[RMDB]
RNA sequence: GGGAACGACUCGAGUAGAGUCGAAAAAAACUUUUGUGACUUGCUGAAACGGGACUAAUCUCCUCACCGAGGCUAAGCAAGUAAAAUACGCCUCUCAUAUCCUUACCUGAGGGUGGUAAGGUAAUAACCUGCAACGCUUCCUUCGGGAAGCGUUGAAUGUACUGAAAAUGUUCGCAUUUUCAGUACAAAAAGAAACAACAACAACAAC
Reactivity to 2A3 in 0.01 (KOAc 150mM, MgCl2 10mM, bicine 150mM(pH8.5), 24C), signal-to-noise 3, nucleotides 027 to 156: a000a000a010c110u160u100u060u120g070u040g050a030c000u010u010g000c010u030g030a050a090a080c030g010g000g010a010c020u060a060a100u050c030u020c040c000u040c030a050c030c080g000a010g030g000c010u030a040a020g010c000a030a030g060u130a000a050a000a010u100a040c070g000c000c000u010c010u000c020a030u050a090u230c000c000u000u010a000c000c010u040g070a060g020g090g000u010g010g010u000a000a010g010g000u000a020a010u020a010a010c010c050u080g010c000a000a010c000g020c000u000u000c000c000u020u030c110g070g010g000a000a000g020c000g000u000u000g000a000a000
Reactivity to DMS in 0.01 (KOAc 150mM, MgCl2 10mM, bicine 150mM(pH8.5), 24C), signal-to-noise 2, nucleotides 027 to 156: a050a030a040c050u020u000u000u000g000u010g010a110c010u000u000g010c020u000g000a070a060a130c090g000g010g010a090c020u010a100a130u000c100u000c020c010u000c060a170c100c020g000a120g030g010c010u000a120a060g020c030a010a040g010u010a050a060a030a100u010a080c110g010c020c000u000c000u000c060a120u000a090u010c020c010u010u000a020c060c020u000g020a090g010g010g070u010g040g000u010a020a030g010g020u000a030a060u000a070a090c020c030u020g030c010a030a020c000g020c030u000u000c000c020u010u010c300g070g010g020a010a010g030c000g000u000u000g000a020a100